[RMDB]
RNA sequence: GGGAACGACUCGAGUAGAGUCGAAAAAACAAUGUUGAUAUGGAACCAUACUGCUCAUCGAUCUGUAGCUAAUAUCGGAAACGAUAUAACUACAGGGAGAGCAGUGGUUCCUAAGUCCGGGGAAAAACAGUUUCAAUAUCUUCGGAUAUUGAAACUGAAAAGAAACAACAACAACAAC
Reactivity to DMS in 0.01 (KOAc 150mM, MgCl2 10mM, bicine 150mM(pH8.5), 24C), signal-to-noise 5, nucleotides 027 to 126: a090a040c120a100a060u010g000u010u000g010a070u010a300u010g010g010a010a000c000c000a070u020a100c020u000g010c000u000c000a300u000c180g010a040u010c010u000g000u000a000g020c020u000a090a040u000a000u000c000g000g000a090a060a140c000g020a010u000a000u000a040a060c000u000a000c000a000g000g000g010a020g000a010g010c000a010g010u000g000g000u000u000c000c000u000a020a090g010u000c010c030g020g000g000g010a080a080a070a100a130
Conditions: 150 mM KOAc, 10 mM MgCl2 and 150 mM bicine (pH 8.5), 24 C. Structure probing data (DMS) for a 177-nucleotide construct. DMS adducts were read by reverse transcription with MarathonRT. The DMS profile rests on 5,929 reads. Reactivities are given for positions 27 through 126. Values are in units of 0.01, from 0 to 300, in steps of 10.